[RMDB]
Structure probing data (2A3 and DMS) for a 170-nucleotide construct. As a SHAPE reagent, 2A3 marks flexible, mostly unpaired nucleotides at the ribose 2'-OH. The RNA was probed in 150 mM KOAc, 10 mM MgCl2 and 150 mM bicine (pH 8.5) at 24 C.
RNA sequence: GGGAACGACUCGAGUAGAGUCGAAAAUAUUUCUGAUAGAAAAAUCAAGAAAUACCCUUGUAUGGUAGGUCCUGAUUAUGCUUACUUCAAUGGUGCUAUCAUCCGUGAUAGUGAUGUUGUUAAACAAUGCACAGUAGCUUCGGCUACUGUAAAAGAAACAACAACAACAAC
Reactivity to 2A3 in 0.01 (KOAc 150mM, MgCl2 10mM, bicine 150mM(pH8.5), 24C), signal-to-noise 4, nucleotides 027 to 129: u020a000u000u000u000c000u000g000a000u040a110g300a130a170a070a070a000u120c120a130a040g040a000a000a120u130a200c000c000c000u010u070g120u150a280u100g040g000u000a040g000g030u010c020c020u030g070a090u160u110a030u170g020c030u070u080a070c000u090u020c030a110a230u170g230g000u230g030c000u020a000u040c040a030u010c020c140g280u100g010a030u050a020g010u000g070a060u210g000u080u040g040u030u050a020a030a020c090a090a030u150g060c210
Reactivity to DMS in 0.01 (KOAc 150mM, MgCl2 10mM, bicine 150mM(pH8.5), 24C), signal-to-noise 4, nucleotides 027 to 129: u000a000u010u030u030c000u030g000a080u020a100g030a060a090a060a070a020u060c000a080a160g030a040a050a000u010a000c050c050c030u040u080g020u040a040u020g020g020u040a070g030g000u040c120c120u080g010a070u050u030a080u040g000c000u020u020a080c100u030u030c070a030a060u030g000g040u060g030c050u040a000u010c010a060u030c100c200g020u040g000a010u010a060g000u000g030a090u060g030u040u000g000u070u070a060a080a140c090a030a040u100g040c180
The DMS profile rests on 9,313 reads.